[RMDB]
RNA sequence: GGGAACGACUCGAGUAGAGUCGAAAAUAUUUCUCUUCAUAUUCCCGGUAUUUUCAACGCCCAUAAUAGGGCAGCUUCUUGUUAAGUAGUGUUGAUUUUGCCGUAACAAAACGGCGAGGAGACAAAUUCUAAGGAGCAUGUUCGCAUGCUCCUUAGAAAAAGAAACAACAACAACAAC
Reactivity to 2A3 in 0.01 (KOAc 150mM, MgCl2 10mM, bicine 150mM(pH8.5), 24C), signal-to-noise 4, nucleotides 027 to 126: u080a040u000u060u040c020u000c060u000u020c000a010u010a040u090u030c000c000c010g030g010u190a160u030u130u040u020c000a020a020c020g030c000c000c000a050u050a300a120u060a260g000g050g000c000a000g000c000u030u010c010u110u170g140u180u230a060a020g000u090a060g080u050g010u120u020g010a000u010u030u030u110g000c000c000g050u030a160a140c060a160a230a040a000c000g000g030c030g000a000g000g000a020g000a000c020a000a110a130u040
Reactivity to DMS in 0.01 (KOAc 150mM, MgCl2 10mM, bicine 150mM(pH8.5), 24C), signal-to-noise 1, nucleotides 027 to 126: u010a060u000u020u010c010u000c000u070u000c000a120u000a060u000u020c000c000c000g040g000u010a020u020u020u010u000c030a050a020c020g000c000c010c000a070u000a160a100u140a180g000g000g030c010a040g000c060u000u000c000u020u000g020u000u040a010a020g000u000a140g050u010g000u000u000g000a050u000u000u000u000g050c000c000g000u030a070a150c290a130a170a070a030c000g000g000c000g000a010g010g000a000g000a080c260a090a070a220u010